This 207-nucleotide RNA was probed chemically with DMS and 2A3.
High DMS reactivity at an A or C suggests that its Watson-Crick edge is free.
2A3 adducts were read by reverse transcription with SuperScript II with manganese.
DMS adducts were read by reverse transcription with MarathonRT.
High 2A3 reactivity points to a flexible backbone, as in loops and unpaired stretches.
[RMDB]
RNA sequence: GGGAACGACUCGAGUAGAGUCGAAAACACACCUGCCUGUGUGCACACAGACAGUAAGCCACAGGUCUGCAGCCCAGGGUCAGAGGUGCAAUGCCGUAGGAAUGGUGGGCCCGGCUUGGCACUGCCCUGGACUCCAGGUAGCAGAACAAGGCUAGCAUCUUAUGGACGGAUUCGUCCGUCCAUAAGAAAAAGAAACAACAACAACAAC
Reactivity to DMS in 0.01 (KOAc 150mM, MgCl2 10mM, bicine 150mM(pH8.5), 24C), signal-to-noise 1, nucleotides 027 to 156: c070a110c100a150c070c000u000g000c000c000u020g010u000g000u000g020c110a210c060a090c010a090g020a100c030a100g030u010a080a060g000c030c000a010c020a110g000g020u000c010u000g010c050a170g030c010c000c010a030g010g030g030u000c060a160g010a050g040g000u020g040c000a030a020u010g000c040c020g040u000a090g020g020a060a050u000g000g020u000g010g050g020c080c000c000g060g020c060u020u000g010g030c020a040c010u000g000c010c030c010u000g000g020a020c020u000c020c020a080g030g060u000a110g040c020a040g020a020a070c020a090a040g020g010c060u000a080g000c110a210
Reactivity to 2A3 in 0.01 (KOAc 150mM, MgCl2 10mM, bicine 150mM(pH8.5), 24C), signal-to-noise 5, nucleotides 027 to 156: c100a000c000a040c010c020u020g010c000c000u000g000u010g080u200g070c040a040c010a010c000a090g210a070c030a040g090u160a080a040g010c010c000a020c010a020g010g030u020c040u030g000c030a010g000c000c000c000a020g020g010g000u130c070a050g040a080g210g000u040g050c000a010a020u210g010c000c010g080u130a120g000g020a080a060u060g030g040u060g030g060g000c000c000c000g000g000c000u020u040g070g010c010a010c020u060g010c010c000c000u010g010g010a010c010u000c020c000a010g010g030u020a010g020c010a000g010a050a050c050a110a040g050g000c010u060a030g040c010a040